[RMDB]
RNA sequence: GGGAACGACUCGAGUAGAGUCGAAAAGAUAUGGAUGUCACCGUUUCACGAUGAGUCGGAAACGACGAGUGAUUGGUGAGCAUCCUAAGUCAAAACUGUGUUGCUUUCUUCGGAAAGCAACACAGAAGGGAAAGACUUAGUUCGCUAAGUCUUUCCCAAAAGAAACAACAACAACAAC
Reactivity to 2A3 in 0.01 (KOAc 150mM, MgCl2 10mM, bicine 150mM(pH8.5), 24C), signal-to-noise 3, nucleotides 027 to 126: g050a030u070a030u150g000g000a000u000g010u060c000a020c000c000g250u050u050u050c050a050c080g130a300u300g110a040g050u020c000g010g030a070a070a060c000g020a000c020g000a050g030u000g010a030u000u060g010g010u020g030a060g000c000a000u010c000c000u020a110a010g080u050c030a020a030a090a110c000u010g000u000g000u030u000g000c000u040u010u030c020u030u030c180g030g030a020a010a000g000c020a010a000c010a010c000a000g000a010a010
Reactivity to DMS in 0.01 (KOAc 150mM, MgCl2 10mM, bicine 150mM(pH8.5), 24C), signal-to-noise 3, nucleotides 027 to 126: g000a040u010a300u000g000g020a000u010g000u000c000a010c010c000g020u000u000u000c010a020c000g010a150u010g000a240g000u000c000g010g010a100a080a160c000g000a000c000g000a150g020u000g000a010u010u000g000g020u000g000a130g010c010a000u020c010c000u010a000a060g010u000c050a050a110a130a160c000u010g010u000g000u000u000g000c000u000u000u000c000u000u010c190g020g000a010a000a000g000c000a000a000c010a010c000a000g010a070a090